[RMDB]
RNA sequence: GGGAACGACUCGAGUAGAGUCGAAAAGGGACGCCUUUAGAAGAAGAGGCUAGGUGGUAUUCCGGUGUGGGAUACUUUGUAAUAUGUAACGCUAAUUGCAUAAGAUUGUAGGACGGAAUUUACAGUCAAAACGGUCCUGCGUUCGCGCAGGACCGAAGAUCCUGUUAGUGUUCGCACUAACAGGAUCAAAAGAAACAACAACAACAAC
Reactivity to 2A3 in 0.01 (KOAc 150mM, MgCl2 10mM, bicine 150mM(pH8.5), 24C), signal-to-noise 2, nucleotides 027 to 156: g000g000g000a010c030g010c020c000u150u040u000a200g020a270a000g030a050a000g030a090g030g000c010u020a030g000g030u070g040g050u050a040u080u130c030c040g020g090u190g030u130g050g000g010a020u010a030c000u000u090u080g080u010a050a100u030a020u150g030u060a020a050c020g020c100u070a090a000u020u070g000c020a020u030a110a010g010a070u060u070g040u070a000g000g110a030c060g030g000a010a020u100u090u040a040c050a030g030u010c020a000a010a090a090c020g000g000u030c000c000u020g000c020g040u070u070c180g000c000g000c110a000g000g040a000c030c000g000a000a000

Chemical mapping of a 207-nucleotide RNA with 2A3. Reactivities are given for positions 27 through 156. The reactions ran in a buffer of 150 mM KOAc, 10 mM MgCl2 and 150 mM bicine (pH 8.5), at 24 C.